[RMDB]
RNA sequence: GGGAACGACUCGAGUAGAGUCGAAAAAAAAAAGAUAUGGAUCUAUUGUCAGGAUAUAGCACGCUAAGACAGUCGGAAACGAUCGAGCGUGCGUAUCCUUGGAUUUAUAGAUCCUAAGUCAAAAAAACCUUCAAUAUGAGUUCGCUCAUAUUGAAGGAAAAGAAACAACAACAACAAC
Reactivity to DMS in 0.01 (KOAc 150mM, MgCl2 10mM, bicine 150mM(pH8.5), 24C), signal-to-noise 2, nucleotides 027 to 126: a000a020a040a040a120a110g010a080u010a300u010g000g030a010u000c000u000a010u010u000g020u000c010a060g000g000a010u000a020u000a070g030c000a020c000g010c030u020a090a050g020a100c300a140g000u000c000g000g000a120a100a180c020g010a020u000c140g010a020g020c010g000u000g010c010g000u000a000u000c000c030u000u010g010g010a000u000u000u010a010u000a000g010a000u000c010c010u000a010a080g010u010c010a000a010a100a170a060a030a100
Reactivity to 2A3 in 0.01 (KOAc 150mM, MgCl2 10mM, bicine 150mM(pH8.5), 24C), signal-to-noise 1, nucleotides 027 to 126: a000a000a000a000a000a000g060a030u080a040u110g000g020a010u030c000u020a010u000u050g000u020c020a000g020g010a000u010a000u000a030g000c010a000c000g000c010u030a030a110g150a120c050a060g060u040c010g000g030a130a050a120c030g010a040u110c010g040a000g000c000g010u010g000c000g000u000a000u020c020c000u010u010g020g000a020u000u300u070a000u010a000g000a010u000c000c010u010a020a010g040u010c040a000a010a020a020a100a100a200
Conditions: 150 mM KOAc, 10 mM MgCl2 and 150 mM bicine (pH 8.5), 24 C.
Chemical mapping of a 177-nucleotide RNA with DMS and 2A3.